RNA sequence: GGGAACGACUCGAGUAGAGUCGAAAAGAUAUGGAUAAGUCGCAAGGUUGACUAUCGGAAACGAUAGCAACUGAUGACCGAGCUUAUCCUAAGUCAAAAGGGAGAAUCGGUUCGCCGAUUCUCCCAACAGAACCGUUAGGUUCGCCUAACGGUUCUGAAAAGAAACAACAACAACAAC
Reactivity to 2A3 in 0.01 (KOAc 150mM, MgCl2 10mM, bicine 150mM(pH8.5), 24C), signal-to-noise 2, nucleotides 027 to 126: g010a000u030a010u050g010g000a010u000a010a000g010u050c030g000c180a120a220g070g000u010u040g050a300c010u010a010u000c010g010g000a040a000a000c000g000a010u000a000g000c010a000a000c000u030g060a100u120g010a000c030c000g000a030g110c000u010u000a000u000c000c000u020a030a020g030u020c020a000a000a090a170g060g000g000a000g000a010a010u000c010g020g130u110u200c300g030c010c000g000a000u000u010c000u020c000c000c000a000a000
Reactivity to DMS in 0.01 (KOAc 150mM, MgCl2 10mM, bicine 150mM(pH8.5), 24C), signal-to-noise 3, nucleotides 027 to 126: g000a030u000a150u000g000g000a020u000a000a000g010u000c010g000c040a090a100g020g010u000u000g020a160c000u000a000u000c000g010g000a030a040a070c000g000a010u000a000g000c000a000a010c000u010g010a070u010g010a070c300c010g000a070g000c000u000u000a010u000c000c000u000a010a100g000u000c020a070a080a100a110g000g010g000a030g010a010a000u000c000g000g000u000u010c200g010c000c000g000a010u010u000c000u000c000c000c000a000a030